[RMDB]
RNA sequence: GGGAACGACUCGAGUAGAGUCGAAAAUAGUCUCUUAUUUUAGCGAUAUCAAUAUCUGUAGCUAAAACACGACCUAAUAUUUUUGCAGAUGUUGUAAUGACUGCAUAACGCUUAAACAUACGAUUGCCAUUGGGGAACUCUUCGGAGUUCCCCAAUGAAAAGAAACAACAACAACAAC
Reactivity to 2A3 in 0.01 (KOAc 150mM, MgCl2 10mM, bicine 150mM(pH8.5), 24C), signal-to-noise 2, nucleotides 027 to 126: u110a150g000u020c000u000c000u070u060a150u120u060u010u070a020g000c030g050a030u000a000u110c010a000a050u000a020u000c000u050g040u020a000g010c130u080a160a000a200a000c140a010c120g300a150c150c020u130a300a290u120a300u070u210u000u060u000g000c000a000g000a000u040g040u000u000g050u130a060a130u100g130a080c030u110g100c120a110u150a170a080c030g000c000u000u080a010a000a010c130a010u210a090c070g250a300u030u130g010c000
Reactivity to DMS in 0.01 (KOAc 150mM, MgCl2 10mM, bicine 150mM(pH8.5), 24C), signal-to-noise 1, nucleotides 027 to 126: u070a040g000u050c030u000c000u020u000a130u000u000u000u000a040g040c000g000a060u000a110u000c010a040a050u010a040u010c070u030g000u010a150g000c040u010a030a020a050a090c250a060c060g060a030c080c070u030a080a070u010a110u000u000u010u030u000g000c000a000g000a040u000g000u010u000g030u010a070a030u010g000a090c010u020g000c030a010u000a000a100c020g060c040u000u020a020a120a150c160a080u000a100c110g000a030u040u030g010c210